[RMDB]
RNA sequence: GGGAACGACUCGAGUAGAGUCGAAAAAAUUGAGCGCGCCUGCAUGCGUUCACGAGUAAGAACAGAUCGACAAAGACAAGCCCUCCCCCUGCAGUUACGGGUUGGGAGGAGACGCAACGCGGGAUUCGCCACUAAUAAAUUUCGAUUUAUUAGUGGCAAAAGAAACAACAACAACAAC
Reactivity to DMS in 0.01 (KOAc 150mM, MgCl2 10mM, bicine 150mM(pH8.5), 24C), signal-to-noise 8, nucleotides 027 to 126: a040a060u010u020g000a050g010c050g020c060g010c030c030u010g010c050a120u020g020c020g000u000u000c040a070c100g000a110g010u020a060a080g010a090a100c110a100g010a070u010c030g000a090c110a070a080a110g010a100c140a090a140g010c070c000c000u000c010c000c000c000c020u000g000c110a150g010u020u030a150c050g000g000g020u010u030g020g000g000a030g000g000a060g000a060c060g010c030a060a080c120g030c040g010g000g000a160u020u010c110
Reactivity to 2A3 in 0.01 (KOAc 150mM, MgCl2 10mM, bicine 150mM(pH8.5), 24C), signal-to-noise 9, nucleotides 027 to 126: a000a010u190u180g030a060g020c100g000c020g030c010c010u030g010c020a050u080g010c010g020u040u040c030a020c070g070a070g090u170a150a040g040a150a020c050a070g080a140u080c030g060a060c100a070a110a020g090a050c040a080a050g020c010c000c000u010c010c000c000c000c000u020g030c070a120g030u120u170a060c050g010g010g020u140u120g090g010g000a010g000g010a010g000a000c020g020c020a040a090c080g000c010g020g020g020a040u080u080c060